[RMDB]
RNA sequence: GGGAACGACUCGAGUAGAGUCGAAAAGAUAUGGAGCUGCGGGAGAGCCCUCUCGGAAACGAGAGAGGCUCAUCGAUCGCAGAACUACUCCUAAGUCAAAAUCACUGACGCUUCGGCGUCAGUGAAACGAAAUGGAAUAGUUCGCUAUUCCAUUUCGAAAAGAAACAACAACAACAAC
Reactivity to 2A3 in 0.01 (KOAc 150mM, MgCl2 10mM, bicine 150mM(pH8.5), 24C), signal-to-noise 2, nucleotides 027 to 126: g000a010u010a010u030g010g000a000g020c010u000g000c000g000g000g010a040g010a000g020c000c000c000u000c000u000c000g000g010a010a010a000c010g000a000g000a000g000a000g000g000c000u000c000a000u060c010g010a000u000c010g000c000a010g000a040a030c030u100a060c000u000c000c000u000a010a000g000u000c000a040a010a000a260u050c000a010c000u010g010a000c000g030c020u060u130c300g190g000c010g000u010c000a000g000u000g000a000a000a000
Reactivity to DMS in 0.01 (KOAc 150mM, MgCl2 10mM, bicine 150mM(pH8.5), 24C), signal-to-noise 3, nucleotides 027 to 126: g000a030u000a010u010g000g000a010g010c020u000g010c000g000g010g000a000g020a010g000c000c000c010u000c000u000c000g010g010a010a010a020c000g010a020g010a010g000a080g010g030c000u000c000a020u000c170g000a080u000c010g000c000a010g000a100a130c230u010a170c010u000c000c000u000a010a100g000u000c020a060a060a120a170u000c000a010c000u000g000a010c000g010c000u000u010c220g030g020c000g000u000c000a000g000u000g000a000a050a120